Record summary
Conditions: 150 mM KOAc, 10 mM MgCl2 and 150 mM bicine (pH 8.5), 24 C. Chemical mapping of a 177-nucleotide RNA with DMS and 2A3. 2A3 adducts were read by reverse transcription with SuperScript II with manganese. Reactivities are given for positions 27 through 126. For DMS, 917 sequencing reads were counted. Source: RMDB library M2PK90, as collected in RNAgym.

RNA sequence: GGGAACGACUCGAGUAGAGUCGAAAAGCAACAUAGAUCGUUCUAUUAACGAACACGCGCGGAUCGUCGGUCGUCGGCGAGCCCACGGACGUACUUGAUCGCGCGAACGAGUAAAAAUCGCCGGCAAGCUUGUAAGUACCUUCGGGUACUUACAAGCAAAAGAAACAACAACAACAAC
Reactivity to DMS in 0.01 (KOAc 150mM, MgCl2 10mM, bicine 150mM(pH8.5), 24C), signal-to-noise 2, nucleotides 027 to 126: g040c110a070a140c090a110u000a070g020a100u010c030g060u000u030c060u000a270u010u010a090a100c100g000a030a090c170a140c020g010c030g000c040g060g000a050u000c000g000u000c060g010g010u000c090g000u000c040g010g010c000g010a070g000c040c010c020a020c060g000g000a050c030g010u000a070c080u040u000g000a010u020c020g000c040g020c030g030a020a040c100g000a050g000u010a040a020a030a060a100u000c010g040c000c010g030g010c220a040a130
Reactivity to 2A3 in 0.01 (KOAc 150mM, MgCl2 10mM, bicine 150mM(pH8.5), 24C), signal-to-noise 2, nucleotides 027 to 126: g030c010a000a090c020a070u200a050g150a090u090c050g000u020u000c040u060a210u190u300a110a070c090g000a000a010c030a020c040g080c000g000c030g060g050a150u080c040g040u010c000g030g080u020c030g020u000c020g010g000c000g020a020g070c000c000c010a000c010g030g030a020c010g030u090a040c060u060u140g040a070u110c020g000c010g000c010g030a050a000c050g000a000g030u120a000a100a090a000a000u000c010g000c000c000g050g000c040a040a040